[RMDB]
RNA sequence: GGGAACGACUCGAGUAGAGUCGAAAACUGGUUGAAGUGGCUUCUCCUGGGCGAUCGCUCGCUGUUUUUGUGGCUGGCUUUCAGCGGGCUGGAGGAGCCGGGAGCGGAGGCGGAGGACCGAGCUAAAGAUGCUAUGUUCACUUCGGUGAACAUAGAAGAUGCCUGAUAUUUUCGAAUAUCAGGCAUCAAAAGAAACAACAACAACAAC
Reactivity to 2A3 in 0.01 (KOAc 150mM, MgCl2 10mM, bicine 150mM(pH8.5), 24C), signal-to-noise 1, nucleotides 027 to 156: c040u090g000g100u100u100g080a120a050g020u060g080g010c030u030u000c010u040c010c000u070g020g080g040c020g060a100u130c090g010c000u010c020g000c010u010g040u070u020u050u100u060g050u020g050g010c100u020g000g010c000u000u070u050c000a000g000c000g020g000g010c030u030g010g030a010g000g030a010g000c020c000g000g020g010a060g000c080g020g040a020g010g020c050g000g030a020g020g020a000c030c040g040a020g050c060u160a080a130a040g050a060u150g040c000u000a000u020g000u000u000c000a010c000u010u070c160g100g000u010g010a000a010c000a000u000a000g000a000a030